Structure probing data (2A3) for a 177-nucleotide construct.

[RMDB]
RNA sequence: GGGAACGACUCGAGUAGAGUCGAAAAUAAAUGUAGUUAUACUCUUUUGCCAUAUCGACGUACUUGUAUGGUGUUUUUACGACACGAGAUAUAGUUUCGUCAAACCACUUCCAGACUUGUAAAACAAGGCUGCGGUAGUAUUCGUACUACCGCAGCCAAAAGAAACAACAACAACAAC
Reactivity to 2A3 in 0.01 (KOAc 150mM, MgCl2 10mM, bicine 150mM(pH8.5), 24C), signal-to-noise 2, nucleotides 027 to 126: u280a000a050a040u250g000u080a050g000u110u180a170u220a230c030u050c050u210u030u240u090g010c000c130a040u000a060u100c170g060a030c020g010u030a040c020u010u020g000u080a120u080g050g040u000g000u000u010u030u000u040a000c000g020a010c000a000c230g030a010g280a040u090a000u040a070g170u090u000u000c000g000u000c000a000a000a000c000c000a020c080u080u050c030c000a100g030a100c020u020u060g070u110a000a070a060a060c110a020a000